[RMDB]
Chemical mapping of a 207-nucleotide RNA with 2A3 and DMS. For DMS the reverse transcriptase was MarathonRT. 2A3 adducts were read by reverse transcription with SuperScript II with manganese.

RNA sequence: GGGAACGACUCGAGUAGAGUCGAAAAAUGAAUACGUAAACCAUGAAGCACAUGACAACUUCCAAGUCAGUGUUGACUAUGAGUGUGUAUUAUAUAGUAGCCGAAUUCUACAGUUCUAUGUGCUUUAGGCACAAAGAUUGCUGUAGGAAUAACGAAAUAAUUACCUCCACUUCGGUGGAGGUAAUUAAAAAGAAACAACAACAACAAC
Reactivity to 2A3 in 0.01 (KOAc 150mM, MgCl2 10mM, bicine 150mM(pH8.5), 24C), signal-to-noise 3, nucleotides 027 to 156: a010u140g000a020a010u040a030c020g030u070a050a160a040c000c020a000u010g030a050a010g010c000a010c090a260u070g020a020c030a070a040c160u260u260c180c060a190a010g000u030c000a000g020u000g030u160u080g060a090c040u120a030u020g020a060g100u040g010u000g010u050a040u110u040a070u030a020u060a100g210u040a020g050c050c000g090a020a090u030u000c000u000a000c000a010g000u030u030c000u010a070u030g000u000g000c000u060u150u220a160g000g090c010a010c020a000a050a000g020a030u050u280g030c010u000g000u020a020g000g040a000a040u060a100a020c050g030a090a000a000
Reactivity to DMS in 0.01 (KOAc 150mM, MgCl2 10mM, bicine 150mM(pH8.5), 24C), signal-to-noise 3, nucleotides 027 to 156: a090u020g020a130a140u010a090c020g030u000a100a070a090c050c020a110u000g020a160a060g030c040a120c020a090u020g040a120c030a030a110c120u000u010c300c070a080a190g010u010c000a050g000u010g010u000u020g020a110c080u010a070u000g020a140g030u000g020u000g010u000a030u000u000a110u000a070u010a120g000u000a150g050c040c000g020a060a210u000u000c010u010a040c000a010g010u000u010c010u010a130u010g020u010g010c000u000u000u010a100g040g040c000a010c000a020a070a030g000a100u000u010g000c000u010g010u010a030g010g000a010a050u020a060a060c060g020a120a070a100